[RMDB]
RNA sequence: GGGAACGACUCGAGUAGAGUCGAAAAAUGCAGUUCGUCAACCCGAUCACGGAUACCAGCCGGCUAACGGUCCUCAUGUCGCGUUGGCAGGACGCGCAUUCCGUGACUGAGGCGAUGCUGCGCGACGCCGGCUGUCAGGUCCGGGCCUAUACCUGGCAUGUAUCUAGUGGUUCGCCACUAGAUACAUAAAAGAAACAACAACAACAAC
Reactivity to DMS in 0.01 (KOAc 150mM, MgCl2 10mM, bicine 150mM(pH8.5), 24C), signal-to-noise 2, nucleotides 027 to 156: a140u000g040c030a050g000u010u000c030g000u010c030a070a090c060c000c000g020a050u000c020a050c010g000g010a090u000a040c030c030a090g020c010c020g040g020c000u010a060a040c040g030g010u000c020c040u000c190a120u000g020u020c010g020c030g020u000u010g040g000c010a050g000g010a020c050g000c080g020c030a070u000u010c020c020g060u000g030a040c020u000g000a160g010g030c050g020a080u000g010c030u000g000c000g030c060g030a080c060g060c000c020g090g020c010u000g010u000c000a020g000g020u000c000c000g010g000g000c010c060u000a160u000a020c000c000u000g030g010c050
Reactivity to 2A3 in 0.01 (KOAc 150mM, MgCl2 10mM, bicine 150mM(pH8.5), 24C), signal-to-noise 5, nucleotides 027 to 156: a000u160g000c010a000g000u030u030c010g000u030c040a160a230c050c020c060g030a180u020c020a000c020g000g000a010u040a110c050c020a070g060c010c020g030g000c020u040a050a020c030g020g050u100c030c060u240c110a190u300g060u110c080g010c010g230u020u030g050g000c030a030g060g030a050c060g060c030g000c100a070u070u030c000c000g010u020g000a000c010u030g030a020g020g010c000g000a030u150g030c010u010g010c030g010c040g040a030c080g010c020c000g000g020c010u020g010u000c000a010g000g000u000c000c010g030g000g010c010c000u030a030u010a010c000c000u000g000g000c000